[RMDB]
The record gives the reactivity of an RNA of 207 nucleotides to DMS and 2A3. DMS adducts were read by reverse transcription with MarathonRT. Conditions: 150 mM KOAc, 10 mM MgCl2 and 150 mM bicine (pH 8.5), 24 C. Source: RMDB library OK3TST, as collected in RNAgym. 2A3 adducts were read by reverse transcription with SuperScript II with manganese.

RNA sequence: GGGAACGACUCGAGUAGAGUCGAAAAUCAGGUUUUUCCGCUUUAAGAAUCGGGUCCCACUGCCCUGCUGGCCAUAGCUGCGGUUUUCCCACGCUCCUGGAGGGCCGAGGGGCAGGGCGGAGCCUAAGGUAGACUGUCAGGCUCUGCAGGUAGCCGACUAAAUGAUCGCAUUCGUGCGAUCAUUUAGAAAAGAAACAACAACAACAAC
Reactivity to DMS in 0.01 (KOAc 150mM, MgCl2 10mM, bicine 150mM(pH8.5), 24C), signal-to-noise 1, nucleotides 027 to 156: u010c040a260g030g030u010u000u000u000u020c030c040g030c030u010u000u000a080a150g000a070a060u010c020g020g000g020u000c000c010c010a180c100u000g010c020c000c010u000g030c030u000g050g040c010c030a160u000a040g000c010u000g000c030g010g000u010u010u000u000c070c010c020a300c060g010c000u020c060c020u000g030g020a110g040g000g030c010c040g010a200g030g040g010g000c030a000g000g000g030c010g020g010a030g010c030c000u000a070a050g030g000u010a140g030a160c060u000g010u010c080a050g030g020c000u000c010u040g000c040a250g000g000u000a090g000c020c010g000a250
Reactivity to 2A3 in 0.01 (KOAc 150mM, MgCl2 10mM, bicine 150mM(pH8.5), 24C), signal-to-noise 2, nucleotides 027 to 156: u130c040a030g020g050u050u060u070u120u110c060c050g050c080u130u080u140a220a140g040a120a090u080c020g020g050g060u060c020c010c060a070c050u000g000c010c000c030u090g040c100u170g010g000c020c010a080u100a110g030c020u020g000c000g000g000u050u000u000u040c010c000c000a020c000g010c000u010c020c030u140g040g110a230g050g200g000c020c000g010a040g010g000g000g010c000a000g010g030g000c020g000g000a000g010c000c000u010a020a020g100g000u070a090g110a300c050u060g050u180c090a000g010g000c000u010c010u000g000c030a000g000g010u010a010g110c010c000g010a010